[RMDB]
RNA sequence: GGGAACGACUCGAGUAGAGUCGAAAAAAUUUAGAUUAUCCAGGUGUAGCGGUGAAAUUCGUAGAGAUCUGGUGGAUAAUGAACCGGUGGCGAAGGCCAAAGAUAACCGCUGAAAUGCUGAAGUGAACGUUUAUGCGAGUUUCGACUCGCAUAAACGAAAAGAAACAACAACAACAAC
Reactivity to DMS in 0.01 (KOAc 150mM, MgCl2 10mM, bicine 150mM(pH8.5), 24C), signal-to-noise 1, nucleotides 027 to 126: a090a070u040u010u000a110g020a200u030u000a110u000c020c000a120g020g030u000g020u010a080g010c020g020g050u000g000a110a070a060u000u000c050g000u010a080g000a160g050a050u000c020u000g000g020u000g000g020a160u020a080a060u020g020a110a110c050c030g000g000u000g000g010c000g000a110a040g000g050c020c010a050a050a050g010a110u000a150a080c020c030g000c000u010g000a040a040a060u000g010c070u020g000a110a060g000u010g020a140a160
Chemical mapping of a 177-nucleotide RNA with DMS. The RNA was probed in 150 mM KOAc, 10 mM MgCl2 and 150 mM bicine (pH 8.5) at 24 C. Reactivities are given for positions 27 through 126. DMS adducts were read by reverse transcription with MarathonRT.